[RMDB]
RNA sequence: GGGAACGACUCGAGUAGAGUCGAAAAUCCGUAAGAUAACAGACAUUUUAUUGCUUAUCACCUGCAUUGGUGCAAUUGUAGGAGCAUUUAUUUCUAACAGAACGUAUGCUUGUAUGUACGGAAUACAGACUAUGAGUACGUUCGCGUACUCAUAGUCAAAAGAAACAACAACAACAAC
Reactivity to DMS in 0.01 (KOAc 150mM, MgCl2 10mM, bicine 150mM(pH8.5), 24C), signal-to-noise 3, nucleotides 027 to 126: u020c000c010g000u010a080a100g000a040u030a050a080c080a040g010a100c140a080u020u030u030u020a030u010u030g000c070u000u020a080u030c080a160c020c030u000g000c060a050u030u010g030g040u000g000c030a040a060u010u000g050u000a000g020g000a050g000c070a030u010u020u040a080u020u010u000c030u000a100a100c270a100g000a030a020c130g020u020a010u000g000c010u020u010g000u000a030u010g010u000a060c060g020g020a060a050u030a050c130a100
Reactivity to 2A3 in 0.01 (KOAc 150mM, MgCl2 10mM, bicine 150mM(pH8.5), 24C), signal-to-noise 7, nucleotides 027 to 126: u010c010c000g020u060a080a060g080a110u090a090a010c040a040g220a040c030a100u060u150u130u170a160u130u130g000c000u050u090a110u280c040a040c050c010u070g020c070a110u040u150g090g050u200g060c030a120a150u100u120g060u080a030g000g070a010g020c000a020u050u110u110a070u020u190u040c040u020a070a080c050a100g030a050a030c050g090u120a040u060g010c030u110u130g080u120a060u120g080u040a030c030g050g050a010a030u180a060c050a040